RNA sequence: GGGAACGACUCGAGUAGAGUCGAAAAGAUGAAUGCUCAUCAAGUCAGACGCUCACUUGCUUUCGCUCAUCGCAGUAAUACUCGUCAGGCCGUUGCUUGGUGGAGUGCUACAGUUUACAACUGGGUGAGCAUGACACUUGUUCGCAAGUGUCAUGCUAAAAGAAACAACAACAACAAC
Reactivity to 2A3 in 0.01 (KOAc 150mM, MgCl2 10mM, bicine 150mM(pH8.5), 24C), signal-to-noise 2, nucleotides 027 to 126: g020a000u080g030a180a040u190g050c040u000c050a060u010c040a010a040g050u040c020a010g020a150c060g000c050u030c040a070c050u020u080g000c000u060u090u170c120g020c030u020c000a080u090c070g000c060a000g010u040a020a010u040a170c040u040c020g030u040c010a000g000g030c020c110g260u150u300g010c020u020u010g000g050u120g160g040a020g000u000g010c000u070a100c010a030g000u050u080u140a110c100a070a010c000u000g030g080g010u110g060
Reactivity to DMS in 0.01 (KOAc 150mM, MgCl2 10mM, bicine 150mM(pH8.5), 24C), signal-to-noise 3, nucleotides 027 to 126: g030a050u000g000a050a170u010g020c100u000c030a060u000c080a080a100g010u000c050a110g060a170c170g010c040u000c020a070c020u000u000g020c100u000u000u000c080g020c020u000c030a040u000c050g010c060a010g040u000a030a060u000a030c020u000c000g000u000c030a040g000g000c030c300g020u000u020g000c040u000u000g020g000u020g030g020a030g020u000g020c050u000a070c040a100g000u000u010u000a150c180a060a080c060u020g000g000g010u000g000